The record gives the reactivity of an RNA of 207 nucleotides to 2A3. Reactivities are given for positions 27 through 156. Source: RMDB library M2RFPK, as collected in RNAgym. 2A3 adducts were read by reverse transcription with SuperScript II with manganese.
[RMDB]
RNA sequence: GGGAACGACUCGAGUAGAGUCGAAAAAUCAGCCUUCGUUCUGUAAACGGGGUUGGAUCCGACUCUCAUAGGCUCUCCAAACCAACUCCUACUCAAUACGUCCUCGUCGUACAGAACGGUAACAUGUAAAACGAAGGCUGCUUCGGCAGCCUUCGAACUCAACAUCAGGGUUCGCCCUGAUGUUGAGAAAAGAAACAACAACAACAAC
Reactivity to 2A3 in 0.01 (KOAc 150mM, MgCl2 10mM, bicine 150mM(pH8.5), 24C), signal-to-noise 1, nucleotides 027 to 156: a000u040c020a010g100c000c000u030u160c000g000u000u000c000u000g070u120a000a040a000c050g000g010g000g040u000u010g050g000a030u210c000c000g200a180c020u060c040u040c210a090u170a180g010g000c000u000c000u000c000c000a030a030a000c030c050a090a090c100u130c010c000u070a060c020u020c130a040a180u140a180c070g100u030c020c010u020c010g020u000c030g080u080a000c000a020g000a000a000c020g000g000u080a080a040c130a080u140g030u160a000a070a000a000c010g000a000a000g000g040c010u020g010c020u000u020c080g040g040c000a000g010c010c000u010u010c000g000a000a000